[RMDB]
RNA sequence: GGGAACGACUCGAGUAGAGUCGAAAAACGGAUGGUACGCCAUCAGACCAUUGGGUAGAAGCGUUCAAUCAGCACCGUGACGGUGCAGAUGGGAAAUUGCCCAUGAUACGCACCAUACGUGGUGCGAAAAAGCCAUCGGUGUUCGCACCGAUGGCAAUCUAACGGUAGUCUUCGGACUACCGUUAGAAAAAGAAACAACAACAACAAC
Reactivity to 2A3 in 0.01 (KOAc 150mM, MgCl2 10mM, bicine 150mM(pH8.5), 24C), signal-to-noise 3, nucleotides 027 to 156: a000c070g080g000a010u000g000g020u050a010c230g050c030c010a030u030c020a000g110a060c030c010a070u060u080g000g020g000u060a020g030a120a010g050c030g060u060u040c030a030a060u010c020a030g000c000a010c000c020g120u200g220a190c300g000g000u000g000c000a000g000a000u010g030g040g020a000a110a110u050u040g010c000c000c000a000u010g020a010u050a030c020g000c000a000c000c000a000u040a090c240g080u040g010g000u010g000c000g020a040a000a000a000a000g020c010c000a000u000c000g000g000u030g020u040u080c210g000c140a000c020c000g000a000u000g010g010c000a000a010
Reactivity to DMS in 0.01 (KOAc 150mM, MgCl2 10mM, bicine 150mM(pH8.5), 24C), signal-to-noise 2, nucleotides 027 to 156: a090c000g020g020a030u010g000g030u000a070c270g030c000c020a050u000c020a160g010a100c050c020a170u000u000g010g030g020u000a140g000a040a070g020c080g030u020u000c030a070a030u000c060a150g020c010a020c000c020g000u000g010a140c100g070g020u000g000c000a010g010a000u000g010g000g000a000a100a130u000u000g010c000c000c010a100u000g000a060u010a110c010g000c010a020c030c000a060u000a070c240g070u000g010g000u010g010c010g000a000a040a040a210a040g000c000c000a010u000c000g000g050u000g000u000u010c300g040c050a040c040c000g020a010u000g000g010c000a000a000
The data come from the RNA Mapping Database (RMDB), library M2RFPK. An RNA of 207 nucleotides, treated with 2A3 and DMS and read out base by base. In probing experiments dimethyl sulfate is read out at A N1 and C N3, which are open when not base-paired.